Structure probing data (2A3) for a 207-nucleotide construct. Reactivities are rounded to 0.1 and cut off at 0 and 3. The reactions ran in a buffer of 150 mM KOAc, 10 mM MgCl2 and 150 mM bicine (pH 8.5), at 24 C.
[RMDB]
RNA sequence: GGGAACGACUCGAGUAGAGUCGAAAAAGACGGAAACCCAUCGACUGUCACCAGAUGCUACAUCACCUGAUCACUGAUGGCUCAACGGUAUCCGGCGGUACAACUGAAUACUUGUAGCUGCCUUUUGAAAAGGAGUUCAUCUUCGGAUGAACUCCAACCAUCUGAAGUGCUUCGGCACUUCAGAUGGAAAAGAAACAACAACAACAAC
Reactivity to 2A3 in 0.01 (KOAc 150mM, MgCl2 10mM, bicine 150mM(pH8.5), 24C), signal-to-noise 3, nucleotides 027 to 156: a010g070a010c050g010g030a040a080a010c020c000c010a060u070c040g090a080c060u100g010u050c040a010c030c010a050g060a120u100g040c080u140a030c020a050u040c020a040c040c030u080g010a040u060c010a000c030u060g020a040u050g060g030c010u030c070a110a080c060g010g020u030a080u070c040c030g000g000c000g000g000u030a010c010a030a010c040u140g060a120a060u110a190c020u020u020g010u010a030g090c010u020g010c010c000u150u140u080u130g050a050a080a040a040g000g000a010g000u000u000c000a000u010c030u050u080c160g110g000a000u010g000a000a010c000u000c000c000a000a000